RNA sequence: GGGAACGACUCGAGUAGAGUCGAAAACACAUUCUUGGCCUUUCCUAUGCCCGGUGAGCAACGCAGCAGUGUGAGGGCUUCGGCGACGUGGUCGUCGUGGAUCGGUCCGGCCAGCAACUCACGCAGCCGUCCUUUAACCGUUCGCGGUUAAAGGACGAAAAGAAACAACAACAACAAC
Reactivity to DMS in 0.01 (KOAc 150mM, MgCl2 10mM, bicine 150mM(pH8.5), 24C), signal-to-noise 2, nucleotides 027 to 126: c080a080c160a070u000u010c030u000u020g000g000c010c020u010u000u010c030c010u000a090u010g030c050c000c030g000g030u020g000a100g000c110a100a100c120g020c060a060g020c070a130g040u000g020u000g000a110g010g000g000c020u010u000c080g000g000c050g000a040c060g000u000g020g010u010c010g040u010c080g020u010g020g050a100u000c040g000g010u010c020c070g020g010c070c050a040g000c050a080a100c030u010c050a020c030g000c120a080g010c100
Reactivity to 2A3 in 0.01 (KOAc 150mM, MgCl2 10mM, bicine 150mM(pH8.5), 24C), signal-to-noise 2, nucleotides 027 to 126: c070a000c010a080u110u030c010u040u080g050g000c020c020u070u020u000c010c010u090a130u140g050c000c020c000g140g000u100g030a050g040c000a050a060c090g000c080a060g040c000a040g040u030g000u050g170a100g000g000g010c000u050u060c030g000g000c010g010a040c060g270u210g080g070u030c010g000u000c010g010u050g050g070a080u080c040g000g020u000c000c020g000g000c000c010a020g020c000a090a140c010u010c020a020c040g070c030a020g050c020

Background
The record gives the reactivity of an RNA of 177 nucleotides to DMS and 2A3. For DMS, 1,466 sequencing reads were counted. The reactions ran in a buffer of 150 mM KOAc, 10 mM MgCl2 and 150 mM bicine (pH 8.5), at 24 C.